Conditions: 150 mM KOAc, 10 mM MgCl2 and 150 mM bicine (pH 8.5), 24 C.
The record gives the reactivity of an RNA of 177 nucleotides to DMS and 2A3.
[RMDB]
RNA sequence: GGGAACGACUCGAGUAGAGUCGAAAACCGUAUCGGUUCGCCGAUACGGAAAAGUUAAUGCUGCUAACACACAACUUAAGCAUGGCGGUGGUAUCGCUGGUGGGACUCCCCAGUUCGCUGGGGAGAAGAAGGGGGAUAAUUUCGAUUAUCCCCCUUCAAAAGAAACAACAACAACAAC
Reactivity to DMS in 0.01 (KOAc 150mM, MgCl2 10mM, bicine 150mM(pH8.5), 24C), signal-to-noise 4, nucleotides 027 to 126: c000c000g020u010a000u000c000g000g010u010u010c220g030c000c010g010a010u000a000c010g000g000a020a030a040a110g010u000u000a070a030u010g010c030u000g010c060u010a060a100c100a120c080a070c100a090a070c080u010u000a100a080g010c050a040u000g000g020c060g010g010u000g000g000u000a040u000c060g020c030u000g020g020u000g010g010g010a240c010u000c000c000c000c000a010g010u000u000c200g010c010u000g000g000g000g020a000g010a030a070
Reactivity to 2A3 in 0.01 (KOAc 150mM, MgCl2 10mM, bicine 150mM(pH8.5), 24C), signal-to-noise 2, nucleotides 027 to 126: c000c000g000u020a000u000c000g020g030u060u030c140g050c070c010g000a000u000a000c010g030g000a000a080a000a000g020u100u110a090a040u090g040c040u030g010c030u150a140a010c050a000c020a000c010a140a100c060u140u170a040a030g030c020a030u040g030g020c030g030g010u040g060g090u100a040u130c020g010c020u000g050g000u080g000g040g020a040c000u000c000c000c000c000a010g010u010u040c140g010c070u000g000g010g020g000a000g000a000a000